[RMDB]
RNA sequence: GGGAACGACUCGAGUAGAGUCGAAAAUUAAUACUGCUACAUUAUUAAGACCCUUAGUUAUUUAGCUUUACCGCCCAGGAUGGGGUGCAGCGUUCCUGCAAUAUCCAGGGCACCUAGGUGCAGCCUUCAUGCCUCAUGCCGUUCGCGGCAUGAGGAACCACACUGAUAACUUCGGUUAUCAGUGUGGAAAAGAAACAACAACAACAAC
Reactivity to 2A3 in 0.01 (KOAc 150mM, MgCl2 10mM, bicine 150mM(pH8.5), 24C), signal-to-noise 1, nucleotides 027 to 156: u070u070a030a040u030a150c080u080g010c040u030a020c000a130u050u110a040u060u050a160a000g100a150c000c000c030u050u020a050g070u090u000a060u100u120u070a010g010c000u070u020u020a030c010c060g000c000c000c000a000g000g000a010u000g070g020g020g000u010g000c010a000g010c020g090u120u110c020c000u010g010c010a020a050u010a000u200c000c000a020g020g000g000c000a050c000c050u030a010g000g010u080g070c020a020g050c040c010u080u180c050a060u060g050c010c000u030c000a000u000g000c010c010g070u060u070c240g000c020g130g000c030a000u000g000a000g000g000a000a000